[RMDB]
RNA sequence: GGGAACGACUCGAGUAGAGUCGAAAAUAAUUAUCAUGUCAAGGAUGUCAUAGACAUUGUCAUCGUCAUAGACACUGUCAUCGUCAUUGACAUUGUCAUUAUCAUCAGAGUAUGACUUAUUUACCGGGAAAUCGAUGUCAAAUUUUAAGCGCUGAGGAAACCUAUAGAGAUUCGUCUCUAUAGGUUUAAAAGAAACAACAACAACAAC
Reactivity to 2A3 in 0.01 (KOAc 150mM, MgCl2 10mM, bicine 150mM(pH8.5), 24C), signal-to-noise 6, nucleotides 027 to 156: u020a000a010u040u060a030u090c030a000u010g000u000c000a010a010g040g010a020u020g070u100c090a060u080a100g000a000c000a000u000u020g020u010c010a070u060c070g300u050c060a090u130a110g010a000c000a000c020u000g000u000c010a020u020c020g030u010c010a030u000u000g000a000c000a010u000u040g000u000c020a000u000u040a020u030c070a020u040c020a010g020a010g140u100a050u150g040a040c000u040u010a050u100u100u030a050c030c010g030g020g070a030a080a040u120c040g060a040u090g050u060c020a030a040a120u080u080u060u100a060a010g060c090g030c030u150g180a110g050g070
Reactivity to DMS in 0.01 (KOAc 150mM, MgCl2 10mM, bicine 150mM(pH8.5), 24C), signal-to-noise 5, nucleotides 027 to 156: u000a040a070u000u000a100u000c110a030u000g010u000c010a030a070g020g030a030u000g010u020c090a190u000a200g000a040c010a010u000u000g000u010c010a120u000c170g030u000c200a120u000a180g020a020c000a040c090u000g020u000c010a110u000c070g010u000c020a080u000u000g000a020c000a020u000u000g010u000c210a070u000u000a060u000c030a120u000c080a120g010a120g020u000a060u000g010a070c030u000u000a090u000u000u000a090c040c030g000g010g010a090a090a090u000c040g010a110u000g020u000c050a050a050a160u010u010u000u000a050a140g010c050g040c050u000g010a100g010g000

An RNA of 207 nucleotides, treated with 2A3 and DMS and read out base by base. Reactivities are given for positions 27 through 156. For 2A3, 4,890 sequencing reads were counted.